Chemical mapping of a 177-nucleotide RNA with DMS and 2A3. For 2A3, 2,903 sequencing reads were counted.
[RMDB]
RNA sequence: GGGAACGACUCGAGUAGAGUCGAAAAGAAUGCCCAUUCGUGGGCAUUCCACCGGAGCGAAGCCGAAAGGCAUUUUAUGCGUACGCUGGCGAAAGCCUAAAAAAGCUCCACUUUUCGAAGUGGAGAAACUAACCCCAUUUUUCGAAAUGGGGUUAGUAAAAGAAACAACAACAACAAC
Reactivity to DMS in 0.01 (KOAc 150mM, MgCl2 10mM, bicine 150mM(pH8.5), 24C), signal-to-noise 3, nucleotides 027 to 126: g000a020a000u000g010c020c000c000a020u000u000c140g040u000g010g010g000c010a010u000u000c000c040a220c050c000g000g020a190g000c040g020a090a160g020c000c030g000a090a080a170g010g010c020a050u010u000u000u000a090u000g010c050g020u010a100c140g010c100u000g010g010c010g020a080a070a160g000c020c040u000a000a030a070a070a100a110g010c010u000c000c000a010c010u000u000u000u010c100g000a010a010g010u000g000g000a010g020a010a030
Reactivity to 2A3 in 0.01 (KOAc 150mM, MgCl2 10mM, bicine 150mM(pH8.5), 24C), signal-to-noise 3, nucleotides 027 to 126: g000a010a000u010g000c010c000c000a000u040u110c210g070u020g000g010g000c000a000u000u000c010c000a030c030c020g030g040a070g050c030g050a060a010g000c030c020g060a100a040a020g080g040c010a000u030u070u000u100a100u110g020c000g010u070a050c080g010c110u040g010g010c010g050a140a030a010g010c030c010u100a080a080a060a010a030a010g050c000u000c020c000a000c000u080u030u050u090c200g100a000a010g000u010g010g010a000g000a070a010
Reactivities are given for positions 27 through 126. The reactions ran in a buffer of 150 mM KOAc, 10 mM MgCl2 and 150 mM bicine (pH 8.5), at 24 C. DMS adducts were read by reverse transcription with MarathonRT. The DMS profile rests on 2,374 reads.